[RMDB]
RNA sequence: GGGAACGACUCGAGUAGAGUCGAAAAGAUGAGAACAUACUGUUCAGUUGGGCGAUCAGGUGACACUCCAAUUCUUGCAGGAGGUCACGAGCAAGAUAAAGAGGACGGCCUGACUUAACAAAAGAAAAAUCCUCGUAUGGUUCGCCAUACGAGGAUUAAAAGAAACAACAACAACAAC
Reactivity to DMS in 0.01 (KOAc 150mM, MgCl2 10mM, bicine 150mM(pH8.5), 24C), signal-to-noise 2, nucleotides 027 to 126: g010a130u000g000a070g000a090a140c120a070u060a140c190u010g010u010u000c050a080g000u000u000g000g000g050c140g000a080u000c050a060g010g010u010g000a020c110a140c000u040c000c020a110a130u030u010c040u020u020g000c100a160g000g000a050g050g000u030c050a070c080g010a150g000c040a040a050g020a020u000a020a270a170g000a050g000g030a070c190g010g020c010c000u000g000a020c040u020u030a050a010c040a020a060a100a030g000a020a120a070
Reactivity to 2A3 in 0.01 (KOAc 150mM, MgCl2 10mM, bicine 150mM(pH8.5), 24C), signal-to-noise 3, nucleotides 027 to 126: g090a030u300g020a030g040a120a010c070a030u170a040c050u070g020u000u000c010a000g000u000u010g010g000g000c020g060a120u010c040a030g030g160u000g020a020c050a100c130u000c000c030a060a160u190u110c120u110u220g060c030a060g020g010a020g000g020u010c000a010c010g020a010g000c030a030a060g050a110u160a120a070a010g080a030g160g010a010c030g120g030c030c000u000g060a000c000u000u000a040a000c050a040a080a060a040g190a060a070a000